[RMDB]
RNA sequence: GGGAACGACUCGAGUAGAGUCGAAAAGAUAUGGAUUAGAGACAUGCUGCUGAAACAACUUGGACCUGAGCUCGGAAACGAGCUCAGCUAGUUGAAAUACGACAGCAACAGCUCUAAUCCUAAGUCAUCCUUGUUUAUAGUUCGCUAUAAACAAGGAAAAAGAAACAACAACAACAAC
Reactivity to 2A3 in 0.01 (KOAc 150mM, MgCl2 10mM, bicine 150mM(pH8.5), 24C), signal-to-noise 6, nucleotides 027 to 126: g040a010u090a060u180g000g000a000u000u010a000g000a000g060a100c160a300u060g000c010u000g000c020u060g060a100a110a060c000a000a000c020u070u180g090g080a090c040c020u000g010a000g000c000u000c000g000g010a030a040a050c010g010a000g000c010u000c000a000g010c000u000a000g000u010u010g080a120a110a040u300a090c250g090a070c030a010g000c000a010a020c020a050g020c010u010c000u000a000a000u010c000c000u000a060a020g020u000c010a060
Reactivity to DMS in 0.01 (KOAc 150mM, MgCl2 10mM, bicine 150mM(pH8.5), 24C), signal-to-noise 7, nucleotides 027 to 126: g000a050u000a300u010g000g000a010u000u000a000g000a020g010a090c090a140u000g010c030u000g020c010u000g000a300a150a150c010a000a000c000u000u010g040g010a170c300c020u000g000a010g020c000u000c000g010g000a090a100a170c010g000a010g000c010u000c010a000g000c010u000a010g000u000u000g000a060a060a120u010a160c200g030a200c020a010g000c000a000a030c140a080g000c000u000c000u000a010a000u000c000c000u000a010a070g010u000c040a160